[RMDB]
The record gives the reactivity of an RNA of 177 nucleotides to 2A3 and DMS. The reactions ran in a buffer of 150 mM KOAc, 10 mM MgCl2 and 150 mM bicine (pH 8.5), at 24 C. The 2A3 profile rests on 1,146 reads.
RNA sequence: GGGAACGACUCGAGUAGAGUCGAAAACUUCACGUGAGGCAAUCACGGAUAUUCCAUAAUUGACUGCUUUUUUUGUCAUUGAAGGUUCUUCUUGAUAAGGAAGACGAGUUAAUUCACUGGCGAGCGACGGGCAUAAAUGAUUCGUCAUUUAUGCCCGAAAAGAAACAACAACAACAAC
Reactivity to 2A3 in 0.01 (KOAc 150mM, MgCl2 10mM, bicine 150mM(pH8.5), 24C), signal-to-noise 2, nucleotides 027 to 126: c020u100u080c050a050c190g010u020g000a010g150g170c190a090a160u010c010a010c000g000g050a070u040a100u090u040c010c030a040u120a170a160u130u070g090a040c040u050g050c000u220u050u040u020u040u040u050g020u030c000a010u000u060g000a020a080g280g000u160u050c010u010u000c000u010u120g100a170u090a150a040g000g000a010a020g030a060c010g030a000g040u040u070a050a090u060u010c000a020c050u030g000g000c070g010a040g030c040g110a100
Reactivity to DMS in 0.01 (KOAc 150mM, MgCl2 10mM, bicine 150mM(pH8.5), 24C), signal-to-noise 2, nucleotides 027 to 126: c150u010u000c080a150c020g020u000g010a030g000g020c250a130a150u000c000a020c020g000g000a050u000a090u000u000c010c020a080u000a030a060u000u000g000a000c020u030g000c010u000u010u010u000u020u000u010g000u000c000a020u010u000g000a010a020g040g030u020u000c010u000u000c010u000u000g000a120u000a060a060g000g000a020a020g010a030c020g000a080g010u000u000a030a060u000u000c060a060c040u000g000g000c120g010a070g020c090g010a240
For DMS the reverse transcriptase was MarathonRT. 2A3 adducts were read by reverse transcription with SuperScript II with manganese.